[RMDB]
RNA sequence: GGGAACGACUCGAGUAGAGUCGAAAACGACGCCGACAACAGGCGCCGCCGUGCGCGCGCGGGCGGCGCUCGAUGCGCGCGGCGCGUCGAGCCGCUCACGCAUGCGUGGUCCGUUGUCAACCGCGCAACCAAAAUUAUGGUUCGCCAUAAUUUUGGUAAAAGAAACAACAACAACAAC
Reactivity to DMS in 0.01 (KOAc 150mM, MgCl2 10mM, bicine 150mM(pH8.5), 24C), signal-to-noise 3, nucleotides 027 to 126: c050g000a120c020g020c030c120g000a060c100a080a070c080a200g000g010c300g020c040c060g000c030c060g000u000g020c060g000c130g000c070g030c050g000g000g010c000g010g020c070g020c140u000c010g000a020u000g010c000g010c000g040c210g010g030c010g020c000g010u000c010g000a050g000c010c010g000c010u000c030a030c000g000c000a040u000g000c030g030u000g000g010u000c030c040g010u000u000g000u000c050a160a080c090c090g010c040g000c040a120
Reactivity to 2A3 in 0.01 (KOAc 150mM, MgCl2 10mM, bicine 150mM(pH8.5), 24C), signal-to-noise 2, nucleotides 027 to 126: c000g200a050c020g030c040c050g080a040c030a090a020c050a240g060g040c060g020c030c010g000c020c020g020u040g000c080g010c020g020c030g010c100g010g020g000c050g030g030c070g080c030u010c000g000a010u010g000c020g010c060g010c130g270g010c010g000c010g010u010c000g000a020g020c000c000g030c010u020c020a030c010g000c020a020u040g050c080g030u010g010g000u020c030c040g000u010u020g020u000c050a080a070c060c030g000c010g000c010a000

The record gives the reactivity of an RNA of 177 nucleotides to DMS and 2A3. The DMS profile rests on 4,862 reads. Reactivities are given for positions 27 through 126.